[RMDB]
RNA sequence: GGGAACGACUCGAGUAGAGUCGAAAAUGAAUAUAGCUAUAGCUGUAUAUCUAUAAGAUAUGAGUGUCUUAUAGAUAUAUGCUUGUAUCUGUAAGAUUCUGUAUCUUUCAAUCUAUCCUGCUUAGGGCCUUCAAUAAGCUUUCGAGCUUAUUGAAGGAAAAGAAACAACAACAACAAC
Reactivity to DMS in 0.01 (KOAc 150mM, MgCl2 10mM, bicine 150mM(pH8.5), 24C), signal-to-noise 2, nucleotides 027 to 126: u010g010a120a120u000a060u000a020g010c070u000a070u000a020g010c000u000g020u010a010u000a010u000c010u020a030u000a010a010g000a000u000a080u010g010a170g010u010g020u000c000u000u000a010u010a000g010a020u000a010u000a020u000g010c060u000u000g010u000a000u010c020u000g010u000a050a050g010a080u000u000c090u010g000u000a040u000c020u000u000u000c130a080a120u000c080u000a070u000c000c000u010g000c130u020u000a090g010g010g010
Reactivity to 2A3 in 0.01 (KOAc 150mM, MgCl2 10mM, bicine 150mM(pH8.5), 24C), signal-to-noise 1, nucleotides 027 to 126: u120g000a020a030u110a000u040a010g060c020u020a020u130a250g010c020u040g020u020a020u010a020u000c010u000a030u020a050a000g010a000u030a060u230g130a080g190u130g000u000c000u000u000a000u030a020g060a000u010a000u010a010u010g000c000u000u050g010u030a020u020c010u000g060u030a050a050g010a140u100u000c080u160g070u030a050u000c020u020u110u070c010a030a040u000c010u120a070u020c010c010u000g070c040u120u120a010g010g150g080

Chemical mapping of a 177-nucleotide RNA with DMS and 2A3. Conditions: 150 mM KOAc, 10 mM MgCl2 and 150 mM bicine (pH 8.5), 24 C. Reactivities are given for positions 27 through 126. For 2A3 the reverse transcriptase was SuperScript II with manganese. It was measured as part of the RMDB library OK2TRN.